[RMDB]
RNA sequence: GGGAACGACUCGAGUAGAGUCGAAAAGCAACAUAGAUCGUUCUAUUAACGAACACGCGCGGAUCGUCGGUGGUCGGCGACCCCACGGACGUACUUGAUCGCGCGAACGAGUAAAAAUCGCCGGCAAACUUACGAUACGAUUCGUCGUAUCGUAAGUAAAAGAAACAACAACAACAAC
Reactivity to 2A3 in 0.01 (KOAc 150mM, MgCl2 10mM, bicine 150mM(pH8.5), 24C), signal-to-noise 9, nucleotides 027 to 126: g050c010a010a100c020a070u160a060g140a120u070c040g030u030u000c050u080a240u220u210a150a070c090g030a040a020c060a020c090g000c000g000c010g040g050a100u090c010g030u000c050g190g010u010g000g010u020c010g000g030c010g020a050c060c050c010c000a000c020g090g000a000c010g000u050a040c030u100u210g100a120u300c010g000c000g000c010g020a010a010c030g020a010g070u140a020a040a020a010a000u010c000g000c020c000g010g000c050a140a080
Reactivity to DMS in 0.01 (KOAc 150mM, MgCl2 10mM, bicine 150mM(pH8.5), 24C), signal-to-noise 8, nucleotides 027 to 126: g010c070a070a080c110a110u010a060g010a090u000c040g010u000u000c030u000a250u010u010a070a090c170g000a060a050c130a170c070g000c010g010c010g010g000a080u010c000g020u000c020g010g030u000g000g010u000c020g010g010c010g020a010c300c080c000c000a010c010g000g010a010c020g020u000a110c190u010u000g010a120u010c020g020c010g000c040g000a020a030c060g010a060g010u010a030a050a020a040a040u000c010g000c000c000g020g000c240a070a110
Source: RMDB library M2PK90, as collected in RNAgym.
Chemical mapping of a 177-nucleotide RNA with 2A3 and DMS.
For DMS, 8,434 sequencing reads were counted.
For DMS the reverse transcriptase was MarathonRT.
The reactions ran in a buffer of 150 mM KOAc, 10 mM MgCl2 and 150 mM bicine (pH 8.5), at 24 C.